The record gives the reactivity of an RNA of 207 nucleotides to 2A3.
The reactions ran in a buffer of 150 mM KOAc, 10 mM MgCl2 and 150 mM bicine (pH 8.5), at 24 C.
The 2A3 profile rests on 1,629 reads.

[RMDB]
RNA sequence: GGGAACGACUCGAGUAGAGUCGAAAAGGGGUCGGAGCCUCGGAUAGCGUCCCAAGGAUCGAUGAAAUUGGCUGAAGCCUCCACGGCCAAUGGAGAUCCAUGGGACGUGCGGAGUGCUCCGACGGAGGCACCCAAAAGGUACCGUUCGCGGUACCAACCUGAUAUCCCUCUUCGGAGGGAUAUCAGGAAAAGAAACAACAACAACAAC
Reactivity to 2A3 in 0.01 (KOAc 150mM, MgCl2 10mM, bicine 150mM(pH8.5), 24C), signal-to-noise 2, nucleotides 027 to 156: g020g000g050g010u000c000g000g000a000g020c050c000u010c030g000g070a300u300a070g050c000g000u010c070c000c000a020a030g000g000a010u020c040g180a300u030g000a000a000a010u000u000g000g000c000u000g030a110a010g040c000c000u000c010c010a020c000g000g000c040c000a000a010u000g000g000a000g000a000u000c000c000a010u000g000g000g000a000c000g010u020g060c130g110g000a020g000u250g020c000u000c000c000g000a000c000g000g000a000g000g020c010a050c010c000c020a030a230a020a090g020g000u010a000c000c000g000u060u120c260g000c020g090g010u010a040c040c000a000a010